[RMDB]
RNA sequence: GGGAACGACUCGAGUAGAGUCGAAAAUACGUGUUCGCACGUACACGGGUCCUAAGUCAGGUCGUGGGCUGGACAUGAUGGUAUCGGAAACGAUAUGGCCAUCAACAGCCAGCCGUAACAUCGACCUGAUAUGGAGAUUGGGGCAAUUCGUUGCCAAUUGGCAAAUAAAUUUCGAUUUAUUUGCCAAAAAAGAAACAACAACAACAAC
Reactivity to 2A3 in 0.01 (KOAc 150mM, MgCl2 10mM, bicine 150mM(pH8.5), 24C), signal-to-noise 4, nucleotides 027 to 156: u150a020c010g000u010g040u030u100c180g030c130a040c050g030u060a040c100a030c070g120g030g050u030c000c010u050a150a000g020u010c010a020g000g000u000c000g000u030g040g000g000c010u010g000g000a040c040a150u070g000a000u000g020g020u080a020u050c020g020g070a120a060a030c030g030a030u020a100u200g280g000c010c000a010u000c010a000a060c040a020g040c000c000a000g010c010c000g000u030a010a020c050a130u250c010g000a010c000c000u000g000a000u000a010u050g010g010a070g020a060u110u220g070g000g000g000c020a010a050u220u120c160g090u120u040g010c010c000a000a100
Reactivity to DMS in 0.01 (KOAc 150mM, MgCl2 10mM, bicine 150mM(pH8.5), 24C), signal-to-noise 4, nucleotides 027 to 156: u010a000c000g030u010g020u010u010c250g080c070a050c030g010u000a020c030a110c080g020g030g020u000c010c020u000a060a280g010u000c000a030g020g010u010c000g030u000g030g010g030c000u000g010g000a040c080a300u000g010a030u000g000g030u000a050u000c010g000g000a190a160a300c010g010a040u000a080u010g090g040c000c010a040u000c010a040a090c110a210g040c010c000a010g000c020c010g010u000a060a120c070a070u000c010g020a010c010c000u010g010a000u000a090u000g020g010a100g010a180u000u010g010g010g010g010c040a080a120u000u000c130g000u000u000g010c010c020a090a300